Conditions: 150 mM KOAc, 10 mM MgCl2 and 150 mM bicine (pH 8.5), 24 C. The record gives the reactivity of an RNA of 177 nucleotides to DMS and 2A3.

[RMDB]
RNA sequence: GGGAACGACUCGAGUAGAGUCGAAAAUAGAGGUGACCAGUUGACAUAAGGUAAAAUCUACAUUGUGCAGCUCUUAUUGUGUGUGAGGGUUGGCCUCAUUAACCAGCGCUAACAAGCCGUGCAAAUGCCUAUGCAAGCUUUUCGAAGCUUGCAUAGGAAAAGAAACAACAACAACAAC
Reactivity to DMS in 0.01 (KOAc 150mM, MgCl2 10mM, bicine 150mM(pH8.5), 24C), signal-to-noise 4, nucleotides 027 to 126: u040a080g010a040g010g010u000g010a070c040c010a060g000u000u010g000a090c060a030u000a090a040g000g000u000a060a060a100a060u020c050u000a080c020a070u000u020g010u000g020c040a040g000c050u000c070u010u000a060u030u010g020u000g030u030g010u010g010a050g000g010g010u000u000g000g000c020c000u000c020a030u010u030a080a160c050c030a070g030c060g010c050u000a080a070c200a110a070g010c080c040g010u020g010c110a070a100a080u080g010
Reactivity to 2A3 in 0.01 (KOAc 150mM, MgCl2 10mM, bicine 150mM(pH8.5), 24C), signal-to-noise 6, nucleotides 027 to 126: u190a020g040a000g010g010u040g010a020c010c020a020g050u040u100g100a140c030a040u120a020a060g050g030u030a040a120a030a140u060c050u040a070c010a070u060u080g040u060g020c010a030g010c010u010c050u090u110a180u170u130g070u010g050u020g030u030g070a060g070g030g040u080u100g150g010c000c000u010c000a030u060u060a010a010c020c000a020g000c030g000c060u040a070a040c040a140a040g050c050c020g020u060g030c040a060a000a090u150g000

2A3 adducts were read by reverse transcription with SuperScript II with manganese. It was measured as part of the RMDB libraries RFM100 and RFMREP. Reactivities are rounded to 0.1 and cut off at 0 and 3.